Conditions: 150 mM KOAc, 10 mM MgCl2 and 150 mM bicine (pH 8.5), 24 C. An RNA of 177 nucleotides, treated with 2A3 and read out base by base. Reactivities are given for positions 27 through 126. For 2A3, 638 sequencing reads were counted. The data come from the RNA Mapping Database (RMDB), library OK1LIB.
RNA sequence: GGGAACGACUCGAGUAGAGUCGAAAAAGCGACUAUAACAGAUAUAUUGUAUAUAAAUGCUUCGAACAUGUCUGAAUCGACUCCUUUAAUUGACCACUAGCUAUUGUAAGUGAAAACUUACAAUUUGCUAUGACGACACCUUCGGGUGUCGUCAUAGAAAAGAAACAACAACAACAAC
Reactivity to 2A3 in 0.01 (KOAc 150mM, MgCl2 10mM, bicine 150mM(pH8.5), 24C), signal-to-noise 2, nucleotides 027 to 126: a000g020c030g120a030c020u050a020u020a090a050c010a040g080a080u100a060u010a110u240u210g050u000a090u020a010u060a180a060a180u140g010c020u040u060c030g110a080a050c030a050u190g020u080c040u060g030a010a030u020c010g000a000c030u070c010c020u070u150u130a130a130u050u100g120a080c020c000a030c160u170a050g070c000u020a000u000u000g000u000a010a010g000u000g140a080a090a030a050c000u000u000a000c000a030a030u000u010u180g030